[RMDB]
RNA sequence: GGGAACGACUCGAGUAGAGUCGAAAAUUUGUUGAUGGCGUGCCAUUUGUAGUAUCUUGUGGUUAUCACUACAAAGAAUUAGGUUUAGUCAUGAAUAUGGAUGUUAGUCUCCAUAGACAUAGGCUCUGAAGCUGAUCCUUCGGGAUCAGCAAAAGAAACAACAACAACAAC
Reactivity to 2A3 in 0.01 (KOAc 150mM, MgCl2 10mM, bicine 150mM(pH8.5), 24C), signal-to-noise 1, nucleotides 027 to 129: u200u170u200g040u090u110g000a300u000g080g000c180g070u000g000c000c010a000u000u000u000g000u000a000g000u000a030u100c070u040u300g090u050g050g020u090u050a030u200c000a130c000u000a000c000a130a010a010g050a000a020u250u170a050g000g000u000u060u060a040g000u000c010a050u000g000a020a040u100a030u120g000g000a000u100g160u050u030a100g000u000c000u000c000c000a000u030a080g000a010c000a000u150a050g010g000c000u000c000u000g030a040a000
The record gives the reactivity of an RNA of 170 nucleotides to 2A3. For 2A3 the reverse transcriptase was SuperScript II with manganese. The 2A3 profile rests on 954 reads.